[RMDB]
RNA sequence: GGGAACGACUCGAGUAGAGUCGAAAAGCUGGGACUACAGGCGCCCGCCACCACGCCCGGCUAAUUUUUUGUAUUUUCAGUAGAGACGGGGUUUCACCGUGUUAGCCAGGAUGGUCUUCAUCUCCUGACAAGUCAAGUGGUUCGCCACUUGACUUGUAAAAGAAACAACAACAACAAC
Reactivity to DMS in 0.01 (KOAc 150mM, MgCl2 10mM, bicine 150mM(pH8.5), 24C), signal-to-noise 1, nucleotides 027 to 126: g010c060u020g000g000g000a120c060u000a090c080a070g080g000c240g000c010c030c030g000c040c000a160c010c020a060c110g000c010c030c040g000g030c000u020a000a000u000u000u020u030u000u080g080u030a050u030u060u010u000c080a120g000u010a090g000a080g020a010c040g000g010g000g000u000u010u040c110a080c010c040g020u010g010u050u030a060g000c020c040a000g020g000a030u000g000g030u000c010u040u000c000a020u070c030u000c010c000u040g020
Reactivity to 2A3 in 0.01 (KOAc 150mM, MgCl2 10mM, bicine 150mM(pH8.5), 24C), signal-to-noise 3, nucleotides 027 to 126: g010c040u060g040g030g000a110c050u130a070c100a090g030g010c060g090c020c000c040g010c030c030a030c030c050a030c060g030c000c000c000g000g000c000u030a060a100u010u100u070u030u090u110g200u110a140u050u070u100u100c090a040g070u090a050g100a000g030a050c010g010g010g050g000u010u100u240c100a130c000c010g020u040g050u080u020a010g010c000c000a000g020g030a060u040g060g030u020c000u060u040c030a120u010c020u000c000c000u010g010
The record gives the reactivity of an RNA of 177 nucleotides to DMS and 2A3. In probing experiments dimethyl sulfate is read out at A N1 and C N3, which are open when not base-paired. 2A3 adducts were read by reverse transcription with SuperScript II with manganese. For 2A3, 1,266 sequencing reads were counted. The reactions ran in a buffer of 150 mM KOAc, 10 mM MgCl2 and 150 mM bicine (pH 8.5), at 24 C. The data come from the RNA Mapping Database (RMDB), library OK1LIB.